[RMDB]
RNA sequence: GGGAACGACUCGAGUAGAGUCGAAAAAUAAUCCUAUGGAAUAGGUACCAAGUAGCCCAGAUCAUUUGCGCUUUAGAGGCAAACCGCCGAAAGUGGUGAAUGCACCGGGCGGCUUUGUCUGGCGACCGCGUCGGAUAAUGUUCGCAUUAUCCGACGCAAAAGAAACAACAACAACAAC
Reactivity to DMS in 0.01 (KOAc 150mM, MgCl2 10mM, bicine 150mM(pH8.5), 24C), signal-to-noise 1, nucleotides 027 to 126: a030u040a040a060u030c000c000u000a150u060g000g000a220a190u000a000g080g000u050a060c270c130a180a090g000u000a080g030c020c070c060a110g000a110u000c100a050u000u000u000g030c080g000c000u000u010u030a110g020a090g000g000c000a000a000a120c040c000g020c000c000g060a020a040a080g060u000g000g060u000g040a280a170u000g070c030a000c000c000g010g000g100c010g000g010c280u000u010u000g050u000c000u000g000g010c050g000a040c300c050
Reactivity to 2A3 in 0.01 (KOAc 150mM, MgCl2 10mM, bicine 150mM(pH8.5), 24C), signal-to-noise 3, nucleotides 027 to 126: a000u120a000a030u110c000c050u060a060u130g180g050a180a040u050a020g000g020u070a090c010c030a050a000g090u020a030g010c010c010c010a000g030a130u070c040a120u140u130u270g020c000g010c010u080u160u260a120g100a010g110g000c000a010a060a030c000c010g050c030c020g080a210a130a060g170u290g050g020u060g080a050a130u170g130c000a010c000c000g000g000g010c000g060g020c040u050u010u010g000u000c010u020g060g010c010g100a030c050c070